[RMDB]
RNA sequence: GGGAACGACUCGAGUAGAGUCGAAAACCGUGCACUCUGGGACGAGCUCGAGAAACUGGGUCUGGUGCCAGAUAUGACGGCAUGCCGCGUAAUGUGUCAUGGAAAGACUUAUCGGUGCACGAUGGGCAAUAUAAUUGAAUUUCGAUUCAAUUAUAUUAAAAGAAACAACAACAACAAC
Reactivity to DMS in 0.01 (KOAc 150mM, MgCl2 10mM, bicine 150mM(pH8.5), 24C), signal-to-noise 1, nucleotides 027 to 126: c000c000g000u010g020c030a010c060u000c050u020g000g000g000a040c030g000a050g000c000u000c010g010a090g020a110a100a120c210u050g000g000g030u020c010u000g000g030u000g000c010c010a020g010a050u030a030u010g000a300c100g000g000c050a080u000g000c000c000g000c010g000u000a300a300u190g030u000g000u000c040a010u010g010g000a060a070a050g000a100c070u000u000a020u010c020g010g000u020g020c020a010c020g010a080u020g010g000g000c100
Reactivity to 2A3 in 0.01 (KOAc 150mM, MgCl2 10mM, bicine 150mM(pH8.5), 24C), signal-to-noise 4, nucleotides 027 to 126: c010c010g010u030g020c040a010c020u060c020u020g010g000g070a010c030g110a020g010c000u010c000g090a090g130a130a160a070c080u100g000g000g110u120c020u040g140g000u050g140c000c000a000g010a020u060a040u090g050a010c000g020g000c010a000u030g000c000c000g000c000g000u100a060a300u300g000u000g000u000c010a020u000g030g060a140a050a030g010a040c020u040u060a040u140c020g050g010u040g040c020a000c030g000a050u130g020g020g030c020